This 207-nucleotide RNA was probed chemically with 2A3 and DMS.
Source: RMDB library RNAMAK, as collected in RNAgym.
RNA sequence: GGGAACGACUCGAGUAGAGUCGAAAAAGGCGUUCGCGCCUGAAGAGGAUAUGGAUCAUCGAAGAACGGAGGGAGAUUGGUGAGGUUAUCGGAAACGAUAACCUGAUCGAGGAUCUCCGGGAGAUGAUCCUAAGUCGAAAUCGCCUUUCGAGGCGAACAGAUGGUUUUUCUUCGGAAAAACCAUCUGAAAAGAAACAACAACAACAAC
Reactivity to 2A3 in 0.01 (KOAc 150mM, MgCl2 10mM, bicine 150mM(pH8.5), 24C), signal-to-noise 3, nucleotides 027 to 156: a000g020g000c020g020u040u050c120g000c010g040c050c000u020g020a090a050g120a050g160g000a050u060a080u260g030g000a010u000c010a000u000c030g140a300a060g010a060a000c010g010g010a000g010g040g000a120g050a110u040u030g050g010u090g100a010g000g000u000u000a010u000c010g010g040a080a050a030c020g000a000u000a000a000c000c000u010g020a000u010c000g000a060g040g040a050u010c010u000c000c020g000g000g000a020g000a000u010g000a000u000c000c000u010a020a010g010u000c010g030a070a020a070u060c010g010c030c000u080u060u090c230g140a020g000g000c040g000a030a010
Reactivity to DMS in 0.01 (KOAc 150mM, MgCl2 10mM, bicine 150mM(pH8.5), 24C), signal-to-noise 1, nucleotides 027 to 156: a010g000g010c010g010u000u020c300g010c000g000c000c000u000g000a100a050g020a170g000g000a100u010a210u000g020g000a060u000c020a040u010c010g000a080a210g000a070a160c000g000g030a080g030g030g000a300g000a120u000u000g030g020u000g010a020g000g040u000u000a000u010c000g030g000a100a100a300c010g020a010u000a000a010c010c000u000g010a000u000c000g020a040g010g010a300u000c000u010c000c010g000g000g000a300g010a040u010g010a010u000c030c000u000a010a060g000u010c010g000a040a040a190u010c010g010c000c000u000u020u000c220g010a090g020g010c030g000a000a100
The 2A3 profile rests on 2,622 reads.